[RMDB]
RNA sequence: GGGAACGACUCGAGUAGAGUCGAAAAGAUAUGGAGGUUGUUUUCCCAAAUUGGAGAACAACAGCUAGCCAUUCGGAAACGAAUGCUAGACAUGUUUGACAAUUUGGGAAAACAACCUCCUAAGUCACCUUUUAAAAGACUUCGGUCUUUUAAAAGGAAAAGAAACAACAACAACAAC
Reactivity to DMS in 0.01 (KOAc 150mM, MgCl2 10mM, bicine 150mM(pH8.5), 24C), signal-to-noise 1, nucleotides 027 to 126: g020a030u010a300u020g000g010a020g040g020u000u010g010u000u000u010u010c000c030c000a000a000a000u000u000g010g030a300g000a020a080c030a020a120c300a100g000c000u000a000g010c180c100a020u000u000c000g000g030a150a020a140c010g000a030a010u000g000c000u000a020g010a050c060a300u000g000u000u000u010g000a300c000a030a000u000u000u000g000g010g000a020a000a010a010c000a000a010c000c000u000c010c020u000a000a050g000u000c030a260

Chemical mapping of a 177-nucleotide RNA with DMS.
Reactivities are given for positions 27 through 126.
For DMS the reverse transcriptase was MarathonRT.
The RNA was probed in 150 mM KOAc, 10 mM MgCl2 and 150 mM bicine (pH 8.5) at 24 C.